Overview
Structure probing data (DMS and 2A3) for a 177-nucleotide construct. The RNA was probed in 150 mM KOAc, 10 mM MgCl2 and 150 mM bicine (pH 8.5) at 24 C. The data come from the RNA Mapping Database (RMDB), library OK1LIB. 2A3 is a SHAPE reagent: it acylates the 2'-hydroxyl of flexible nucleotides of all four kinds. Reactivities are given for positions 27 through 126. For DMS, 96,025 sequencing reads were counted.

RNA sequence: GGGAACGACUCGAGUAGAGUCGAAAAGCUAGAGCGUUGUCGUAUUAGGCCGGAUAUGCGACGUCAGUUUGAUCCUGGCUGCGAAGCGGUCGGACCGGCCUAAGGAUCUUACUGGUGCUCUAGGAAAGGGUUUAUGUGUGUUCGCGCACGUAAGCCCAAAAGAAACAACAACAACAAC
Reactivity to DMS in 0.01 (KOAc 150mM, MgCl2 10mM, bicine 150mM(pH8.5), 24C), signal-to-noise 9, nucleotides 027 to 126: g010c000u000a000g000a010g010c010g010u030u020g010u000c050g010u010a060u010u000a050g000g010c010c010g000g000a150u030a080u020g000c000g000a060c010g010u050c020a020g000u000u000u010g010a030u010c030c000u010g010g000c010u000g000c070g010a140a130g020c090g000g000u010c040g000g010a210c190c010g000g000c000c010u010a020a010g000g010a020u000c020u010u010a030c050u020g010g010u030g010c000u000c000u000a000g000g010a060a080a110
Reactivity to 2A3 in 0.01 (KOAc 150mM, MgCl2 10mM, bicine 150mM(pH8.5), 24C), signal-to-noise 8, nucleotides 027 to 126: g060c000u000a000g000a000g000c010g060u080u150g030u060c010g010u020a040u030u070a050g030g030c020c010g020g010a050u060a020u150g040c000g000a000c010g050u110c010a010g000u010u050u060g010a010u000c000c000u010g010g000c000u020g010c040g040a110a030g060c070g050g060u080c020g010g020a030c010c010g000g000c010c000u020a040a020g000g000a010u000c000u010u040a020c010u030g030g030u100g000c000u000c000u000a000g000g020a030a050a040